[RMDB]
RNA sequence: GGGAACGACUCGAGUAGAGUCGAAAAGAUAUGGAUUCAGCUUUUGACGAGGUGGUCUCGGAAACGAGACCCACCUCGAUAAGCUGAUCCUAAGUCAAAGAAUCCAUGGGUUCGCCCAUGGAUUCAAUCUCUUGGGUAAGUUCGCUUACCCAAGAGAAAAAGAAACAACAACAACAAC
Reactivity to 2A3 in 0.01 (KOAc 150mM, MgCl2 10mM, bicine 150mM(pH8.5), 24C), signal-to-noise 1, nucleotides 027 to 126: g020a010u110a020u120g020g020a050u300u160c020a010g000c020u130u140u250u300g200a130c080g000a000g000g030u000g000g040u040c000u000c000g000g000a070a070a050c010g000a000g000a020c020c000c010a000c000c000u010c000g000a020u000a000a000g000c010u000g000a000u000c000c000u000a130a000g050u000c040a280a060a020g030a010a020u000c000c000a000u030g000g000g040u050u120c300g200c030c000c000a010u000g000g000a000u000u010c000a000a000
Reactivity to DMS in 0.01 (KOAc 150mM, MgCl2 10mM, bicine 150mM(pH8.5), 24C), signal-to-noise 2, nucleotides 027 to 126: g000a040u010a300u000g000g010a010u030u010c020a000g000c000u010u010u000u030g010a150c150g030a020g000g050u000g000g010u000c000u000c000g010g010a080a130a150c000g000a000g000a010c190c040c040a010c000c000u010c000g010a040u000a030a010g030c000u010g010a020u000c000c020u000a040a110g040u000c040a090a070a150g010a020a000u000c000c000a000u000g000g020g030u000u030c300g010c000c000c000a000u000g000g000a000u000u000c000a040a120
An RNA of 177 nucleotides, treated with 2A3 and DMS and read out base by base. The 2A3 profile rests on 2,015 reads. The RNA was probed in 150 mM KOAc, 10 mM MgCl2 and 150 mM bicine (pH 8.5) at 24 C. The data come from the RNA Mapping Database (RMDB), library TTRDEL. Reactivities are rounded to 0.1 and cut off at 0 and 3.